[RMDB]
RNA sequence: GGGAACGACUCGAGUAGAGUCGAAAACUCUUUGUUUUUGGAUGUUGCUAUGAUUUGGAUAAUGGUGUCUUCUUCAAAAAUCAUGUGGAAACUCAAUCCCUAAUGCAACAGCAUGAAGACAUGUGGCCACUAUUGAGUGAUUCGUCACUCAAUAGUGAAAAGAAACAACAACAACAAC
Reactivity to DMS in 0.01 (KOAc 150mM, MgCl2 10mM, bicine 150mM(pH8.5), 24C), signal-to-noise 8, nucleotides 027 to 126: c030u000c070u010u000u000g010u000u000u000u000u000g010g010a140u000g010u000u000g010c000u010a110u010g010a130u000u010u000g010g000a070u010a070a110u010g010g020u010g010u000c110u000u000c030u010u010c060a010a040a060a080a100u010c140a060u000g020u000g000g000a040a040a050c070u010c100a070a080u000c030c000c080u010a070a060u010g010c020a020a020c040a050g010c070a120u010g010a020a030g000a020c030a030u000g020u010g010g010c160
Reactivity to 2A3 in 0.01 (KOAc 150mM, MgCl2 10mM, bicine 150mM(pH8.5), 24C), signal-to-noise 6, nucleotides 027 to 126: c020u020c000u060u060u080g020u010u020u000u030u040g090g020a070u020g010u030u010g010c030u060a060u150g040a190u130u080u150g040g000a040u030a160a160u200g080g030u070g050u050c110u040u000c010u030u030c040a110a150a110a090a140u150c080a090u110g030u040g010g030a010a020a020c010u010c040a030a050u020c010c010c000u070a110a040u110g020c010a020a020c000a040g030c050a080u110g020a030a020g040a030c010a020u070g080u120g170g030c040
Source: RMDB library OK2TST, as collected in RNAgym. Chemical mapping of a 177-nucleotide RNA with DMS and 2A3. 2A3 adducts were read by reverse transcription with SuperScript II with manganese. For 2A3, 7,774 sequencing reads were counted. The reactions ran in a buffer of 150 mM KOAc, 10 mM MgCl2 and 150 mM bicine (pH 8.5), at 24 C.